[RMDB]
RNA sequence: GGGAACGACUCGAGUAGAGUCGAAAAGAUAUGGAAGCCUACCAGCAACAGCUACCCAUCGGAAACGAUGGUGUAGACAUGCUGAUGGCUUCCUAAGUCAAAAGGCAGUGACUUCGGUCACUGCCAAGGAUAACGAUAACUUCGGUUAUCGUUAUCCAAAAGAAACAACAACAACAAC
Reactivity to DMS in 0.01 (KOAc 150mM, MgCl2 10mM, bicine 150mM(pH8.5), 24C), signal-to-noise 4, nucleotides 027 to 126: g000a010u000a050u000g000g000a010a010g010c000c000u000a090c150c000a010g010c010a150a120c280a160g010c000u000a010c000c000c000a000u000c000g000g010a020a030a030c000g000a010u000g000g010u020g010u010a000g010a010c080a240u010g010c000u000g000a040u000g000g000c010u000u000c000c000u000a000a060g000u000c020a090a080a140a140g000g010c000a010g010u000g000a010c000u000u020c240g030g010u000c010a010c000u000g000c010c000a000a020
Reactivity to 2A3 in 0.01 (KOAc 150mM, MgCl2 10mM, bicine 150mM(pH8.5), 24C), signal-to-noise 5, nucleotides 027 to 126: g000a010u010a010u060g000g000a010a000g010c010c010u070a140c130c020a010g000c070a080a230c070a280g020c000u000a000c010c000c000a010u010c000g000g020a010a010a000c000g000a010u000g000g000u040g000u020a000g010a000c020a210u300g000c000u000g000a030u000g000g000c000u000u000c000c000u000a010a000g000u010c010a030a010a170a220g000g000c000a000g000u010g000a020c010u110u200c300g140g010u020c000a000c010u010g000c000c000a000a000

This 177-nucleotide RNA was probed chemically with DMS and 2A3. Source: RMDB library TTRDES, as collected in RNAgym. The reactions ran in a buffer of 150 mM KOAc, 10 mM MgCl2 and 150 mM bicine (pH 8.5), at 24 C. For 2A3, 14,816 sequencing reads were counted. Reactivities are rounded to 0.1 and cut off at 0 and 3. For DMS the reverse transcriptase was MarathonRT.